An RNA of 177 nucleotides, treated with DMS and 2A3 and read out base by base. The reactions ran in a buffer of 150 mM KOAc, 10 mM MgCl2 and 150 mM bicine (pH 8.5), at 24 C. Values cover nucleotides 27 to 126. Values are in units of 0.01, from 0 to 300, in steps of 10. The DMS profile rests on 5,007 reads.
[RMDB]
RNA sequence: GGGAACGACUCGAGUAGAGUCGAAAAAAUGCCGAAUGUAAACCACCGGCCGAUCAUAUCGUGAACGUACCACACAAAAACGACCAGGAGUUCCAGGCAGCCGUCUCCCAAACAUCAUGGAGCUGGCCAUUAUUGUCAACUUCGGUUGACAAUAAUGAAAAGAAACAACAACAACAAC
Reactivity to DMS in 0.01 (KOAc 150mM, MgCl2 10mM, bicine 150mM(pH8.5), 24C), signal-to-noise 5, nucleotides 027 to 126: a100a070u000g010c020c000g010a100a080u010g020u000a070a100a120c070c030a090c070c010g000g010c110c050g000a050u000c100a060u000a130u010c110g010u000g010a060a090c100g000u010a080c040c060a050c070a040c120a030a050a050a090a090c070g010a060c040c040a070g020g000a170g000u000u000c030c020a070g010g010c060a050g020c020c040g000u000c050u000c010c000c050a070a060a110c150a050u000c120a070u010g000g000a060g010c040u010g010g000c100
Reactivity to 2A3 in 0.01 (KOAc 150mM, MgCl2 10mM, bicine 150mM(pH8.5), 24C), signal-to-noise 4, nucleotides 027 to 126: a000a000u120g010c020c010g030a090a070u180g010u220a060a120a080c030c010a020c010c020g010g000c010c010g000a050u070c030a080u090a030u150c050g030u020g030a050a030c040g030u050a050c010c030a040c030a000c040a080a050a030a090a070c020g030a030c010c010a030g040g010a030g010u030u020c020c010a010g030g000c020a010g030c010c010g030u010c030u030c010c020c010a090a170a030c060a100u220c020a040u130g020g000a030g030c030u030g020g050c010